An RNA of 177 nucleotides, treated with 2A3 and DMS and read out base by base. The reactions ran in a buffer of 150 mM KOAc, 10 mM MgCl2 and 150 mM bicine (pH 8.5), at 24 C. Reactivities are rounded to 0.1 and cut off at 0 and 3. For 2A3 the reverse transcriptase was SuperScript II with manganese. DMS adducts were read by reverse transcription with MarathonRT. It was measured as part of the RMDB library OK2TST. Values cover nucleotides 27 to 126.
RNA sequence: GGGAACGACUCGAGUAGAGUCGAAAAAUGAUUGCUUCGUUACAAGGCAUGUCAAAGUCUGUAUUAUUGGGACUGUGUCUAAAUUCAUCCAGGGAGACACACUAUUAUUUCUGGGUCCAUUGGAGGAGAUAUCACCAGUGUUCGCACUGGUGAUAUCAAAAGAAACAACAACAACAAC
Reactivity to 2A3 in 0.01 (KOAc 150mM, MgCl2 10mM, bicine 150mM(pH8.5), 24C), signal-to-noise 3, nucleotides 027 to 126: a000u100g010a020u020u070g030c010u050u030c030g150u140u070a050c040a100a020g000g000c020a040u110g040u100c060a060a070a030g000u000c010u050g240u140a160u190u120a100u110u220g040g020g000a010c030u030g010u010g020u000c010u040a080a150a110u070u070c040a050u040c030c010a020g020g000g010a120g030a030c010a000c000a010c080u050a120u300u020a110u020u120u000c040u050g030g020g030u020c030c010a050u040u100g050g010a030g010g000a080
Reactivity to DMS in 0.01 (KOAc 150mM, MgCl2 10mM, bicine 150mM(pH8.5), 24C), signal-to-noise 4, nucleotides 027 to 126: a070u010g000a070u000u000g010c040u000u000c100g030u000u010a080c200a130a050g000g020c010a020u010g010u000c090a050a110a120g000u010c020u000g000u010a100u010u020a090u020u000g000g000g000a040c090u010g010u000g010u000c010u030a030a050a130u010u000c070a080u000c020c020a040g000g000g000a070g010a030c050a020c030a080c160u000a050u000u010a110u000u000u010c060u000g010g000g010u000c030c010a110u000u010g010g000a070g010g000a120